An RNA of 177 nucleotides, treated with DMS and 2A3 and read out base by base. The DMS profile rests on 33,357 reads. For 2A3 the reverse transcriptase was SuperScript II with manganese. Conditions: 150 mM KOAc, 10 mM MgCl2 and 150 mM bicine (pH 8.5), 24 C. DMS adducts were read by reverse transcription with MarathonRT.

RNA sequence: GGGAACGACUCGAGUAGAGUCGAAAACGGUACAUGGUACUCUACUAGCGCGCGAUCGAGUACUAUCGAGAGUCUACGUCACAGGCCGGAUCCGUGAUCUGGCCUGGAUCUGGCCGCGCCUGCGCAGCCAUCCACUACUAUUCGUAGUAGUGGAUGGAAAAGAAACAACAACAACAAC
Reactivity to DMS in 0.01 (KOAc 150mM, MgCl2 10mM, bicine 150mM(pH8.5), 24C), signal-to-noise 9, nucleotides 027 to 126: c070g010g010u000a080c140a080u000g010g010u000a010c010u000c010u000a110c130u010a110g010c070g010c020g020c040g000a130u000c130g010a030g010u000a030c040u000a040u000c080g010a100g010a100g010u000c050u010a090c220g010u000c060a130c030a030g000g020c000c000g010g000a010u000c010c300g000u010g010a030u000c020u000g010g000c000c010u000g000g000a030u000c080u000g000g010c010c020g010c070g000c020c020u000g010c040g020c050a150g010
Reactivity to 2A3 in 0.01 (KOAc 150mM, MgCl2 10mM, bicine 150mM(pH8.5), 24C), signal-to-noise 9, nucleotides 027 to 126: c030g020g040u130a090c050a120u080g010g010u030a010c000u010c020u060a120c050u080a060g070c030g000c010g000c030g130a060u090c040g010a020g020u030a040c030u030a050u080c140g060a080g000a020g160u030c060u110a070c080g060u040c040a030c010a300g000g000c000c010g000g010a010u010c060c180g160u200g020a020u000c020u030g020g000c000c000u000g000g000a000u000c020u020g030g000c000c000g010c010g030c010c020u060g010c030g000c010a020g040